[RMDB]
RNA sequence: GGGAACGACUCGAGUAGAGUCGAAAACAUGUGAUGGAUGAUGGAGGCUUGGACCCUGGCAAUGGAGCAGUGAAGAUAAACCUGAUCAUCUAUUUGGAGGAAGAGCCCACACCCACAGGAUUUGCUACCUAUAGCAGCAGUUCGCUGCUGCUAUAGGAAAAGAAACAACAACAACAAC
Reactivity to 2A3 in 0.01 (KOAc 150mM, MgCl2 10mM, bicine 150mM(pH8.5), 24C), signal-to-noise 3, nucleotides 027 to 126: c040a060u120g020u060g060a110u070g010g070a050u050g010a030u030g060g120a120g000g070c030u020u030g100g040a140c010c030c000u020g110g120c040a020a090u060g040g020a050g000c020a020g010u060g240a170a050g040a150u210a080a070a020c000c000u000g020a070u110c010a040u000c030u020a060u080u030u070g050g010a060g020g020a040a040g000a020g030c000c010c030a030c010a010c000c010c000a030c040a040g100g030a170u140u100u140g030c010u050a080
Reactivity to DMS in 0.01 (KOAc 150mM, MgCl2 10mM, bicine 150mM(pH8.5), 24C), signal-to-noise 4, nucleotides 027 to 126: c080a110u020g000u000g000a080u000g010g010a070u010g000a110u000g030g010a130g020g020c030u000u010g010g010a280c120c020c010u000g000g040c100a070a030u020g000g010a070g010c030a040g020u000g020a080a090g020a140u010a050a070a080c040c020u020g010a110u010c040a070u000c030u000a040u000u010u010g030g000a050g000g000a130a080g000a060g010c030c010c020a060c050a090c010c010c020a070c140a090g000g010a090u000u010u000g020c090u000a120
The data come from the RNA Mapping Database (RMDB), library OK2TRN. The record gives the reactivity of an RNA of 177 nucleotides to 2A3 and DMS. Values are in units of 0.01, from 0 to 300, in steps of 10. For 2A3 the reverse transcriptase was SuperScript II with manganese.